[RMDB]
RNA sequence: GGGAACGACUCGAGUAGAGUCGAAAACAACUUGACUAAGACUGUUUCAGAGAACCCAUUACCACUCAGCUGUUGGUCUGAAGUUCAAAAUUACAUUGAAGACAUAGGCUUUAACAAUGUACUUGUUAACAUUGACAGAAACACGGUGAAAAGUGAACCCCUAUGCGUAGUUCGCUACGCAUAGGGGAAAAGAAACAACAACAACAAC
Reactivity to 2A3 in 0.01 (KOAc 150mM, MgCl2 10mM, bicine 150mM(pH8.5), 24C), signal-to-noise 1, nucleotides 027 to 156: c030a010a060c010u080u130g080a050c040u190a030a010g040a020c060u130g050u020u030u030c140a140g020a050g030a170a060c000c000c010a020u000u210a100c010c020a000c050u080c010a050g020c080u010g020u100u020g040g010u010c000u040g120a080a000g010u080u080c000a000a000a000a090u140u070a030c000a040u010u120g040a030a000g050a010c080a150u130a050g060g000c000u140u070u040a070a090c020a000a020u000g040u050a070c020u090u020g040u160u010a120a000c070a110u130u130g030a040c000a010g100a020a060a000c010a010c040g000g010u070g040a040a060a040a020g030u040g030a050a010